[RMDB]
RNA sequence: GGGAACGACUCGAGUAGAGUCGAAAACCUUUCGGCGAGACUUGGCGUGUUUCUGUCGUUCUUAGUAUAGCAUAUUUAUAAUGCGCUUACAUUUUCUUGCCAUGAAGAUAACAAUAUAUUGCUAAGAAAUAAACCUCUCGUUCGCGAGAGGUUUAUUAAAAGAAACAACAACAACAAC
Reactivity to DMS in 0.01 (KOAc 150mM, MgCl2 10mM, bicine 150mM(pH8.5), 24C), signal-to-noise 2, nucleotides 027 to 126: c010c080u010u040u000c090g000g010c000g010a040g000a090c300u000u000g010g010c100g040u030g000u030u020u030c100u010g000u000c040g030u000u010c000u000u000a070g010u010a060u010a110g000c030a050u010a060u060u030u020a120u020a120a010u000g010c080g000c010u000u050a150c140a050u020u030u010u020c000u000u000g030c020c010a140u020g000a070a150g000a040u020a030a200c220a110a040u040a060u010a060u020u010g010c020u020a040a040g000a100
Reactivity to 2A3 in 0.01 (KOAc 150mM, MgCl2 10mM, bicine 150mM(pH8.5), 24C), signal-to-noise 3, nucleotides 027 to 126: c000c000u010u030u070c020g000g000c000g000a000g010a100c020u060u190g000g010c070g090u070g010u060u000u030c000u060g030u030c020g090u030u000c030u000u010a040g040u100a090u030a150g030c040a020u100a180u130u150u030a190u170a130a050u150g030c010g000c000u050u180a050c060a180u090u040u030u040c000u020u000g000c010c000a010u160g020a000a000g080a150u220a230a010c060a270a010u090a040u030a050u150u120g020c030u070a030a000g020a010